[RMDB]
RNA sequence: GGGAACGACUCGAGUAGAGUCGAAAACACAAGAGUCCUAUUCAUGAUUAUAUUGAUGGUGAGAAAAUUAAUUAUCCUGCAGCCAUGCCUUUUUCAAAGAAGAACGAAAUUGAUCCCAUUCAAGUAAUGUUGUCAAAGUAUUCAGUGCCAAUUGCUAAUUUGACAAAAGAUUCGUCUUUUGUCAAAUAAAAGAAACAACAACAACAAC
Reactivity to 2A3 in 0.01 (KOAc 150mM, MgCl2 10mM, bicine 150mM(pH8.5), 24C), signal-to-noise 2, nucleotides 027 to 156: c130a020c010a050a000g020a050g100u020c000c000u100a130u150u140c070a070u060g070a090u090u140a120u110a050u200u000g040a060u090g010g010u080g050a080g060a040a090a040a020u200u150a050a080u060u060a060u060c000c010u040g010c020a010g050c050c010a030u030g030c000c000u060u110u040u070u120c090a120a180a000g030a040a000g010a010a030c070g030a030a080a040u040u030g030a040u040c020c010c000a000u020u020c100a100a020g050u050a010a100u070g020u020u000g030u040c030a040a040a100g020u040a250u050u090c010a000g030u000g010c030c040a040a090u180u030g010c020u140a070
Reactivity to DMS in 0.01 (KOAc 150mM, MgCl2 10mM, bicine 150mM(pH8.5), 24C), signal-to-noise 2, nucleotides 027 to 156: c040a130c040a090a070g010a150g020u000c020c030u020a060u000u000c040a110u000g010a100u010u000a060u010a120u000u000g010a060u010g000g020u010g010a110g000a070a060a090a100u010u000a030a140u000u000a090u000c030c040u010g010c050a160g000c050c070a060u000g000c010c000u000u000u000u000u000c070a080a080a090g000a080a050g010a030a070c090g000a060a070a110u000u000g000a110u000c000c030c010a150u000u000c050a060a150g000u000a020a050u000g010u000u000g010u000c020a060a070a150g030u000a060u020u020c030a120g010u000g020c020c040a110a070u000u000g010c040u010a120